[RMDB]
RNA sequence: GGGAACGACUCGAGUAGAGUCGAAAAAGCGUCGACGAACCUUCCAACCUACCAAAGCAGCAAAAGCUGAACCUUCCAACCUUCCAAUCUACUCGAGAGGAGGAGGAGGAGGAGGAGGAGGAAUUAACACCAUUUAGAACUUCGGUUCUAAAUGGUGAAAAGAAACAACAACAACAAC
Reactivity to 2A3 in 0.01 (KOAc 150mM, MgCl2 10mM, bicine 150mM(pH8.5), 24C), signal-to-noise 2, nucleotides 027 to 126: a000g120c060g050u060c030g030a090c040g010a070a110c010c000u010u000c040c000a090a080c010c010u060a050c010c030a060a090a010g020c010a030g000c020a210a110a190a020g020c020u030g010a010a040c000c020u050u000c020c010a080a060c020c030u060u010c010c020a040a070u000c010u020a050c030u040c070g030a030g000a020g080g040a030g010g030a040g000g030a050g030g030a050g020g050a020g030g070a030g020g010a020g000g040a030a020u140u060a090a010
Reactivity to DMS in 0.01 (KOAc 150mM, MgCl2 10mM, bicine 150mM(pH8.5), 24C), signal-to-noise 2, nucleotides 027 to 126: a060g020c050g010u000c020g010a120c020g000a050a160c010c020u000u000c030c060a050a080c060c020u000a120c020c030a090a030a120g000c030a100g000c070a050a040a110a140g010c030u000g000a120a100c000c020u000u000c010c020a070a200c070c040u000u000c020c060a130a210u000c000u000a010c080u010c020g000a050g000a180g000g000a100g000g000a090g000g010a260g000g050a080g010g000a120g010g000a210g010g000a110g000g010a300a080u020u000a030a180
Conditions: 150 mM KOAc, 10 mM MgCl2 and 150 mM bicine (pH 8.5), 24 C. The record gives the reactivity of an RNA of 177 nucleotides to 2A3 and DMS. 2A3 adducts were read by reverse transcription with SuperScript II with manganese. Values cover nucleotides 27 to 126.